[RMDB]
RNA sequence: GGGAACGACUCGAGUAGAGUCGAAAAUCAGAGUUCGCUCUGAGCCUCCUAAGUCAGCUGGAGACCCUACGCGAGUAGACAUGAGCGUCGGAAACGACGCUCAACAGCUACUCAGGGUCUAUGAAGGCUGAUAUGGAUUGACAGCAAUUCGUUGCUGCUAAAUAAGGCUGUUCGCAGCCUUAUUUAGAAAAGAAACAACAACAACAAC
Reactivity to DMS in 0.01 (KOAc 150mM, MgCl2 10mM, bicine 150mM(pH8.5), 24C), signal-to-noise 3, nucleotides 027 to 156: u010c030a050g020a030g030u000u000c240g030c010u000c000u010g000a100g010c010c020u010c000c020u000a100a300g040u000c020a020g000c030u020g000g000a120g010a010c010c020c010u000a120c200g030c210g010a050g010u010a010g010a080c070a300u000g010a020g050c000g060u000c000g000g010a160a150a220c020g030a040c010g050c000u000c000a010a040c050a130g000c020u000a010c000u000c010a100g030g020g000u000c010u010a020u010g020a190a290g020g010c000u000g000a010u000a070u010g010g000a090u010u000g020a150c030a040g000c000a060a110u000u000c080g020u000u000g000c010u010g010
Reactivity to 2A3 in 0.01 (KOAc 150mM, MgCl2 10mM, bicine 150mM(pH8.5), 24C), signal-to-noise 4, nucleotides 027 to 156: u020c000a000g000a010g030u150u130c210g090c110u000c000u010g010a020g020c000c000u020c000c000u070a180a070g000u000c000a000g000c000u020g040g010a000g000a010c010c000c010u060a070c300g100c100g090a000g000u000a000g010a050c020a130u060g000a000g000c000g010u010c010g010g030a030a060a070c030g000a010c000g000c000u000c000a000a000c000a000g000c010u000a000c000u000c010a020g000g030g000u000c000u030a230u030g020a000a010g010g000c000u010g000a000u000a010u030g030g000a020u020u300g070a020c000a000g020c000a010a050u090u100c230g090u160u010g000c010u010g000